Overview: Structure probing data (2A3 and DMS) for a 177-nucleotide construct. DMS adducts were read by reverse transcription with MarathonRT. The reactions ran in a buffer of 150 mM KOAc, 10 mM MgCl2 and 150 mM bicine (pH 8.5), at 24 C. For 2A3 the reverse transcriptase was SuperScript II with manganese. The 2A3 profile rests on 6,581 reads.
RNA sequence: GGGAACGACUCGAGUAGAGUCGAAAAAGAGAAACCCUUUUCGAUAUCUUGGCAACCAGAAACUAUGAUGAAAUCGAAGGAACCUGGGGAGACACAGUAUAUGAACCUGAAGGAUUUGCCAAAGUCAACUAUCACCACUAUUCGUAGUGGUGAUAGUAAAAGAAACAACAACAACAAC
Reactivity to 2A3 in 0.01 (KOAc 150mM, MgCl2 10mM, bicine 150mM(pH8.5), 24C), signal-to-noise 7, nucleotides 027 to 126: a010g190a000g030a060a040a040c020c000c000u050u020u020u080c030g030a020u030a060u110c060u030u020g010g010c000a010a060c030c030a030g090a060a090a020c060u110a110u220g030a050u090g070a100a110a170u090c030g050a080a020g010g010a040a040c020c010u020g030g000g010g060a060g060a020c030a000c000a060g120u060a060u020a050u210g050a040a050c000c010u050g050a090a060g070g030a130u080u040u040g020c000c000a020a000a000g060u050c020a020
Reactivity to DMS in 0.01 (KOAc 150mM, MgCl2 10mM, bicine 150mM(pH8.5), 24C), signal-to-noise 6, nucleotides 027 to 126: a110g010a170g000a160a090a110c030c010c000u000u020u000u020c040g010a050u010a040u020c110u010u000g010g000c020a060a080c040c030a050g020a090a050a100c080u010a070u020g000a080u010g020a060a100a290u000c030g010a100a060g040g000a100a110c130c040u000g000g000g000g000a070g010a150c070a050c060a020g000u000a100u040a100u020g010a080a090c140c010u010g010a090a070g010g000a080u020u000u000g010c000c030a060a030a080g010u010c080a130